[RMDB]
Chemical mapping of a 177-nucleotide RNA with DMS and 2A3. For 2A3 the reverse transcriptase was SuperScript II with manganese. The 2A3 profile rests on 4,051 reads. The data come from the RNA Mapping Database (RMDB), library M2PK50.

RNA sequence: GGGAACGACUCGAGUAGAGUCGAAAAGCAGUAGUGUUCGCACUACUGCAAAUAAAAAGAGGUGCAAGCUACACCCUCUAUAAGCAAAGAUCGAAAGAUCAAAAACAUGCUACUUCGGUAGCAUGAACAUGACAUGAUUCUUCGGAAUCAUGUCAUGAAAAGAAACAACAACAACAAC
Reactivity to DMS in 0.01 (KOAc 150mM, MgCl2 10mM, bicine 150mM(pH8.5), 24C), signal-to-noise 2, nucleotides 027 to 126: g000c010a000g020u000a030g020u000g010u020u010c250g020c010a010c000u010a000c010u010g030c000a010a050a050u000a060a040a070a090a020g020a060g000g000u010g030c070a090a080g010c220u000a090c030a030c070c020c040u010c020u000a070u010a050a100g010c190a080a060a150g000a000u000c000g010a100a070a180g010a000u010c000a020a070a080a090a180c000a000u000g000c030u000a000c000u020u000c080g010g010u000a000g000c000a000u000g000a040a110
Reactivity to 2A3 in 0.01 (KOAc 150mM, MgCl2 10mM, bicine 150mM(pH8.5), 24C), signal-to-noise 3, nucleotides 027 to 126: g000c010a000g000u030a000g000u010g020u080u100c200g060c050a010c000u000a000c000u000g000c000a000a010a000u060a020a040a020a010a000g030a010g000g040u070g060c130a110a090g050c050u080a070c020a040c040c120c010u000c010u020a200u040a040a030g060c080a190a030a040g000a000u010c000g020a070a010a010g010a010u030c050a000a030a020a000a070c000a010u010g000c000u000a000c000u030u050c130g090g000u000a000g000c000a000u000g000a000a010
For DMS the reverse transcriptase was MarathonRT.